Chemical mapping of a 177-nucleotide RNA with DMS and 2A3.
For 2A3, 498 sequencing reads were counted.
2A3 adducts were read by reverse transcription with SuperScript II with manganese.
For DMS the reverse transcriptase was MarathonRT.
RNA sequence: GGGAACGACUCGAGUAGAGUCGAAAAACAAUGGUGAGCAAGCUCAGCUCGUACUGAGAAGCCUAAAGUUGUUAUCAUGGUUACCCACCUUAGCUAAAACAGGUUUACUUUUUCAGAGUGGUCUUCGACUUUAAGAUGCCUUCGGGCAUCUUAAAGUAAAAGAAACAACAACAACAAC
Reactivity to DMS in 0.01 (KOAc 150mM, MgCl2 10mM, bicine 150mM(pH8.5), 24C), signal-to-noise 1, nucleotides 027 to 126: a000c010a000a030u000g000g010u010g000a140g010c020a040a160g000c010u010c000a030g010c110u000c200g050u010a140c000u000g000a000g000a080a070g000c010c030u000a120a060a140g020u000u000g000u000u020a100u010c050a110u010g030g010u000u000a160c030c010c040a180c120c030u000u000a090g010c140u000a060a050a020a050c180a030g010g010u010u010u000a030c070u000u000u030u000u000c100a150g030a060g010u000g010g010u010c020u000u010c300g000
Reactivity to 2A3 in 0.01 (KOAc 150mM, MgCl2 10mM, bicine 150mM(pH8.5), 24C), signal-to-noise 1, nucleotides 027 to 126: a050c030a070a000u020g030g070u090g030a080g060c020a250a000g000c000u000c030a000g000c020u090c230g020u060a170c060u010g020a010g000a020a010g000c020c000u110a130a040a000g000u020u070g030u020u050a070u180c090a090u100g020g110u170u110a170c000c000c010a010c000c010u040u060a010g040c010u030a010a000a130a000c050a020g110g030u000u220u140a110c070u180u140u120u060u190c030a090g050a020g100u110g020g010u030c040u030u020c080g010
The RNA was probed in 150 mM KOAc, 10 mM MgCl2 and 150 mM bicine (pH 8.5) at 24 C. Source: RMDB library RFMREP, as collected in RNAgym.